The data come from the RNA Mapping Database (RMDB), library OK3TST. An RNA of 207 nucleotides, treated with 2A3 and DMS and read out base by base. The reactions ran in a buffer of 150 mM KOAc, 10 mM MgCl2 and 150 mM bicine (pH 8.5), at 24 C. High 2A3 reactivity points to a flexible backbone, as in loops and unpaired stretches.
RNA sequence: GGGAACGACUCGAGUAGAGUCGAAAAACGGUGUGUCUGGCUCCUCUAUCCUCAGAGCCCAGGCUUCAGGCCACCCCAGAGGUGACCUUGGGCCCAGCGCACUUCCAUCUUCCUUCUCCUCCUUACCCGAUUAUAGGGAGGGAAUAAGAGCGCCUGCCCAUAAACAGGUAUUCGUACCUGUUUAUGGAAAAGAAACAACAACAACAAC
Reactivity to 2A3 in 0.01 (KOAc 150mM, MgCl2 10mM, bicine 150mM(pH8.5), 24C), signal-to-noise 3, nucleotides 027 to 156: a010c070g000g000u020g000u020g040u070c030u050g000g030c000u030c030c030u140c070u100a190u210c030c030u160c130a050g000a020g030c040c060c020a020g000g020c000u120u130c060a010g010g010c010c010a000c000c020c000c000a060g110a180g020g000u000g010a030c020c000u030u080g010g010g000c030c020c020a020g020c010g010c020a020c000u130u020c070c010a120u020c040u060u050c030c040u040u060c070u070c020c000u020c000c010u010u060a180c040c030c060g170a190u120u130a070u230a150g000g000g030a000g010g000g020a010a020u110a060a020g020a010g010c080g040c050c060u080g020c040
Reactivity to DMS in 0.01 (KOAc 150mM, MgCl2 10mM, bicine 150mM(pH8.5), 24C), signal-to-noise 1, nucleotides 027 to 156: a110c080g020g000u000g020u010g030u010c040u000g010g000c020u000c010c010u030c040u000a090u000c060c040u050c130a110g020a060g000c060c010c060a040g020g020c020u000u000c160a060g000g000c030c000a100c010c010c020c150a200g010a130g000g010u020g000a010c010c010u010u000g000g000g030c060c030c080a080g020c040g040c030a080c030u000u020c020c020a060u010c130u020u010c050c020u000u000c030u010c000c000u000c020c000u010u010a050c050c030c250g150a180u000u010a100u000a040g070g030g010a040g010g030g000a040a060u000a030a100g000a110g030c050g000c050c060u000g010c220